[RMDB]
RNA sequence: GGGAACGACUCGAGUAGAGUCGAAAACGGCGAACACGUCGAACAGCUCGAAAGACGUGGAGAGCUGGAUUUCUUUCUUUAGAUCGGAGCAGAAAGGCGAACUGCAAAGCCGUCGAUCGAACGCCGAGGGCUCGUGGGGCUUCGGUUCCGCGGGCCCAAAAGAAACAACAACAACAAC
Reactivity to DMS in 0.01 (KOAc 150mM, MgCl2 10mM, bicine 150mM(pH8.5), 24C), signal-to-noise 9, nucleotides 027 to 126: c020g010g020c010g000a190a160c040a020c020g000u000c010g020a100a150c080a100g010c140u030c120g000a110a090a180g000a030c040g010u000g000g010a130g000a300g000c020u000g000g000a120u000u010u010c060u000u000u010c020u000u000u010a120g010a220u010c020g000g000a070g000c050a280g000a010a030a190g000g000c000g000a070a220c030u020g020c290a090a070a070g010c110c010g000u000c010g000a150u010c010g000a070a170c090g000c010c010g000a080
Reactivity to 2A3 in 0.01 (KOAc 150mM, MgCl2 10mM, bicine 150mM(pH8.5), 24C), signal-to-noise 9, nucleotides 027 to 126: c000g000g010c010g010a040a010c020a010c040g020u020c010g030a070a040c030a050g100c060u090c100g110a210a080a020g040a030c050g030u040g030g100a180g010a000g010c020u010g020g010a030u040u040u030c020u020u080u010c030u050u130u090a150g010a150u050c020g010g000a030g020c080a030g060a060a060a010g040g000c020g050a120a090c050u130g030c100a070a060a040g030c040c000g020u020c010g010a030u010c010g010a040a030c060g020c030c010g020a110
This 177-nucleotide RNA was probed chemically with DMS and 2A3.
The RNA was probed in 150 mM KOAc, 10 mM MgCl2 and 150 mM bicine (pH 8.5) at 24 C.
Values cover nucleotides 27 to 126.
2A3 adducts were read by reverse transcription with SuperScript II with manganese.
For DMS the reverse transcriptase was MarathonRT.